[RMDB]
RNA sequence: GGGAACGACUCGAGUAGAGUCGAAAAUGUCCACGUAAGCUGUUCCGCGUGGAUGAUCAAGUGUUCAUCCUGACGGGUCAGGGUGGCCCGGCCAAACGGGAUUUCUUCGAUCCAACAGUAGCUCACGUGGGUGGGCAAGGUCAGAAAGGGCACACCGUAAACCUGAUCCAUUCGUGGAUCAGGUUUAAAAAGAAACAACAACAACAAC
Reactivity to DMS in 0.01 (KOAc 150mM, MgCl2 10mM, bicine 150mM(pH8.5), 24C), signal-to-noise 2, nucleotides 027 to 156: u010g020u000c010c000a080c040g040u020a090a120g070c020u000g000u010u000c030c000g040c000g020u020g020g040a010u010g000a070u000c050a120a190g010u000g040u000u000c040a060u000c000c000u000g010a060c020g010g010g020u010c080a090g000g070g020u000g010g020c000c020c000g010g040c050c190a040a120a250c090g010g030g010a110u010u000u010c050u000u000c160g020a020u010c000c010a030a170c040a210g010u010a100g000c000u000c000a020c010g030u010g000g010g000u000g000g050g010c020a080a030g000g010u000c030a140g020a040a030a100g030g010g040c040a100c010a100c010c000g030
Reactivity to 2A3 in 0.01 (KOAc 150mM, MgCl2 10mM, bicine 150mM(pH8.5), 24C), signal-to-noise 2, nucleotides 027 to 156: u110g070u040c020c000a070c050g070u060a110a000g140c050u010g020u100u010c030c040g030c040g040u030g000g060a000u000g000a020u050c090a250a160g060u180g050u300u050c010a010u020c000c010u010g030a050c010g010g000g020u030c000a030g000g020g050u020g030g010c000c000c000g000g000c030c040a040a080a000c040g000g020g000a020u070u060u050c080u120u130c050g020a020u020c020c010a040a050c000a070g120u110a020g050c000u000c000a020c060g150u250g070g210g020u020g020g040g000c050a100a050g040g000u000c010a010g210a150a060a070g010g000g020c050a040c010a010c100c000g040
This 207-nucleotide RNA was probed chemically with DMS and 2A3.
The DMS profile rests on 3,291 reads.
Reactivities are given for positions 27 through 156.
Conditions: 150 mM KOAc, 10 mM MgCl2 and 150 mM bicine (pH 8.5), 24 C.